[RMDB]
RNA sequence: GGGAACGACUCGAGUAGAGUCGAAAACGGCAGCUGAGUCAGCCUGAAUCCCUCCAUGGGGCGUCUUUGCAGCUCCCUGCCCCUGCUGGUUGAAGGCUCUGUUGGUCGCAUUCUUCUCUCUCACAGAUCUGUAACUCAGAUUCGUCUGAGUUACAGAAAAAGAAACAACAACAACAAC
Reactivity to DMS in 0.01 (KOAc 150mM, MgCl2 10mM, bicine 150mM(pH8.5), 24C), signal-to-noise 3, nucleotides 027 to 126: c140g010g010c040a050g010c050u000g010a130g010u000c050a090g020c040c020u000g010a160a160u000c070c000c010u000c080c080a070u010g020g000g010g030c040g030u010c090u020u010u000g010c070a100g000c030u010c020c020c030u000g000c010c010c020c020u000g000c030u000g010g010u010u020g000a130a140g000g010c010u000c040u000g000u000u000g020g020u010c040g000c060a090u000u000c040u000u000c020u000c040u000c050u000c040a080c180a100g020a160
Conditions: 150 mM KOAc, 10 mM MgCl2 and 150 mM bicine (pH 8.5), 24 C.
Chemical mapping of a 177-nucleotide RNA with DMS.